An RNA of 177 nucleotides, treated with DMS and 2A3 and read out base by base. Values cover nucleotides 27 to 126. The RNA was probed in 150 mM KOAc, 10 mM MgCl2 and 150 mM bicine (pH 8.5) at 24 C. For DMS the reverse transcriptase was MarathonRT. The data come from the RNA Mapping Database (RMDB), library OK1LIB.

RNA sequence: GGGAACGACUCGAGUAGAGUCGAAAAUCGCGGUGGACAGUGCUCAAAAGUUUGAGCUGGCGCGUUGGAGGGUGGGGCGGGUGUGGGGGAGGCCCAACGGUUUGGCAAACUUUAUUCACUUGCCGCGCAGUUAUUAAAUGUUCGCAUUUAAUAACUGAAAAGAAACAACAACAACAAC
Reactivity to DMS in 0.01 (KOAc 150mM, MgCl2 10mM, bicine 150mM(pH8.5), 24C), signal-to-noise 1, nucleotides 027 to 126: u040c040g010c000g000g020u010g000g030a220c230a050g010u030g000c080u000c080a010a030a240a100g030u000u000u000g010a050g030c040u000g000g000c010g010c060g000u010u000g000g000a120g010g000g000u080g020g000g010g010c060g000g000g000u010g000u040g000g000g000g000g000a070g000g000c040c010c020a040a090c180g020g010u020u000u020g000g030c000a010a030a020c040u000u000u010a140u070u030c100a050c010u020u000g010c000c000g010c070g000
Reactivity to 2A3 in 0.01 (KOAc 150mM, MgCl2 10mM, bicine 150mM(pH8.5), 24C), signal-to-noise 3, nucleotides 027 to 126: u120c020g000c010g010g030u090g020g060a040c050a110g060u010g090c030u030c050a020a020a010a100g070u050u050u030g030a050g020c000u010g040g000c020g000c020g090u060u130g030g030a030g030g050g070u250g020g020g020g050c060g020g030g010u090g000u050g030g010g000g020g000a030g030g030c020c000c000a030a060c060g000g000u040u060u090g030g000c000a010a010a040c000u050u070u060a110u060u080c010a030c010u020u030g000c010c010g000c010g000